[RMDB]
RNA sequence: GGGAACGACUCGAGUAGAGUCGAAAAUAUUGAUGAGCCUCUCCUGUUCUUCCAAUGGGAUGGGUUCAUACUAUACCUUUGUGGGGACAGUUCAGGCAAAGGACAAGCAGACUUCCAGGGCUAUUGCUCUGGGGUACACCUUCGGGUGUACCCCAGAAAAAGAAACAACAACAACAAC
Reactivity to 2A3 in 0.01 (KOAc 150mM, MgCl2 10mM, bicine 150mM(pH8.5), 24C), signal-to-noise 1, nucleotides 027 to 126: u080a020u040u140g090a030u000g000a010g000c000c020u070c040u000c060c000u000g020u010u070c020u230u030c020c030a020a020u010g000g000g010a000u000g000g000g000u000u020c000a000u010a020c010u010a000u060a040c000c000u030u010u020g040u040g030g090g040g020a000c040a060g020u020u110c010a030g060g080c040a010a010a000g080g030a090c000a050a100g050c040a030g000a080c060u100u030c020c010a010g060g030g000c070u050a130u140u120g000c000
Reactivity to DMS in 0.01 (KOAc 150mM, MgCl2 10mM, bicine 150mM(pH8.5), 24C), signal-to-noise 1, nucleotides 027 to 126: u020a020u010u000g020a020u010g010a010g000c000c000u000c200u020c020c020u000g060u010u010c200u000u010c250c200a090a020u000g000g020g040a060u000g000g000g040u000u030c070a010u000a030c070u000a050u000a080c030c000u030u010u010g000u070g000g000g030g000a070c100a140g010u000u010c080a000g010g000c030a050a110a140g000g010a110c030a030a130g000c100a110g000a090c170u000u010c010c070a040g000g010g010c000u000a060u000u000g020c090